Notes: This 177-nucleotide RNA was probed chemically with DMS and 2A3. For DMS the reverse transcriptase was MarathonRT. Values cover nucleotides 27 to 126. The DMS profile rests on 1,821 reads. Conditions: 150 mM KOAc, 10 mM MgCl2 and 150 mM bicine (pH 8.5), 24 C. The 2A3 profile rests on 991 reads.
RNA sequence: GGGAACGACUCGAGUAGAGUCGAAAAAGUACUUCCACUCGUAGAGGGAGAUGAAGGUUCGUUUUGUUGGUGACCGACAGGUGACCGACUGUUUGUGGCACCUGCGCUGCACGCGGCUUCCUCCUUAGCGCAUUAGGGUAUUCGUACCCUAAUGCGCAAAAGAAACAACAACAACAAC
Reactivity to DMS in 0.01 (KOAc 150mM, MgCl2 10mM, bicine 150mM(pH8.5), 24C), signal-to-noise 2, nucleotides 027 to 126: a080g000u010a020c090u000u000c030c020a080c100u010c020g020u030a120g020a190g030g010g000a030g000a070u010g000a040a060g020g020u000u000c040g020u000u000u010u000g020u000u000g020g000u000g000a090c100c000g020a120c190a010g000g000u000g000a140c000c010g030a070c090u010g010u010u000u010g010u000g010g000c020a030c020c030u000g010c060g010c060u000g020c010a010c160g020c070g000g010c010u010u000c000c020u010c110c050u000u000a140
Reactivity to 2A3 in 0.01 (KOAc 150mM, MgCl2 10mM, bicine 150mM(pH8.5), 24C), signal-to-noise 2, nucleotides 027 to 126: a000g040u090a070c020u020u000c010c010a050c040u060c080g110u110a080g010a060g140g090g010a030g020a050u200g040a010a060g050g000u000u230c000g010u060u060u160u170g060u040u080g010g050u000g040a070c030c030g000a060c020a050g040g000u000g070a220c020c050g120a040c000u060g130u230u200u150g060u060g040g000c010a020c030c000u120g000c090g000c020u100g000c050a010c030g030c000g010g050c020u020u010c010c010u000c000c000u070u020a020
Notes: Source: RMDB library OK2TST, as collected in RNAgym.